[RMDB]
RNA sequence: GGGAACGACUCGAGUAGAGUCGAAAAACGGUGCGGUAGUUCGCGCUUCCGUGAAACGCGAAAAUCGGACGGUGGCUGCAAGUCGCAUCGCAAAACCGCGGCAAGUGGAGUUAGCGAGAGGAGGCUGAAACCAUCCAACACUUCGGUGUUGGAUGAACAAUCGAUACUGGUUCGCCAGUAUCGAUUGAAAAGAAACAACAACAACAAC
Reactivity to 2A3 in 0.01 (KOAc 150mM, MgCl2 10mM, bicine 150mM(pH8.5), 24C), signal-to-noise 3, nucleotides 027 to 156: a000c020g000g000u010g010c000g000g030u030a040g150u090u100c060g000c020g000c040u040u000c020c020g050u050g070a170a110a020c060g010c040g070a050a040a010a120u130c020g030g010a010c020g020g000u030g040g000c090u120g000c070a060a030g010u040c000g000c040a040u020c010g000c010a050a070a000a000c040c020g010c010g040g000c080a080a080g010u070g080g030a060g010u110u090a030g020c020g040a040g010a020g020g040a010g000g030c030u040g030a100a030a020c040c000a000u000c000c000a000a000c010a000c000u020u090c250g070g000u000g000u000u000g000g000a000u010g000a000a000
Reactivity to DMS in 0.01 (KOAc 150mM, MgCl2 10mM, bicine 150mM(pH8.5), 24C), signal-to-noise 1, nucleotides 027 to 156: a030c010g000g000u000g030c010g000g030u000a100g010u000u010c030g030c030g020c030u000u000c000c160g090u000g010a080a020a010c010g030c010g020a040a040a070a070u010c050g020g000a040c040g010g040u000g000g000c020u020g000c010a120a140g030u000c030g010c030a110u000c040g060c060a050a070a040a100c030c040g020c040g030g010c050a100a120g010u000g000g000a120g000u000u010a090g010c040g010a110g020a050g030g000a040g020g030c050u000g000a060a080a110c030c010a030u010c000c000a000a020c000a010c000u000u020c230g030g000u010g000u000u000g020g010a010u000g000a020a080